[RMDB]
RNA sequence: GGGAACGACUCGAGUAGAGUCGAAAAACUAGUCGUACGCGACUAGAAUCCAGGGCAACCGUGGCUUUCGAUUGUUACUGUGGGAACCGGAGGUAACAGUCUACAGCCAUGGUCGCCCCGCAGCAAAGCUGCGACGCCAUUUCGAUGGCGUCGCAGCAAAAGAAACAACAACAACAAC
Reactivity to 2A3 in 0.01 (KOAc 150mM, MgCl2 10mM, bicine 150mM(pH8.5), 24C), signal-to-noise 1, nucleotides 027 to 126: a020c000u000a000g000u000c000g030u040a040c280g000c010g020a000c000u000a000g010a000a060u030c030c010a010g000g010g000c000a000a000c000c000g000u000g000g000c020u030u020u010c000g000a000u000u000g000u000u010a010c020u100g040u110g150g080g180a110a170c110c070g170g030a180g040g020u000a000a000c000a010g000u050c000u000a000c000a000g000c000c000a000u000g000g000u010c000g000c000c000c000c000g000c030a080g030c000a000a090a050

This 177-nucleotide RNA was probed chemically with 2A3.
The RNA was probed in 150 mM KOAc, 10 mM MgCl2 and 150 mM bicine (pH 8.5) at 24 C.
Values are in units of 0.01, from 0 to 300, in steps of 10.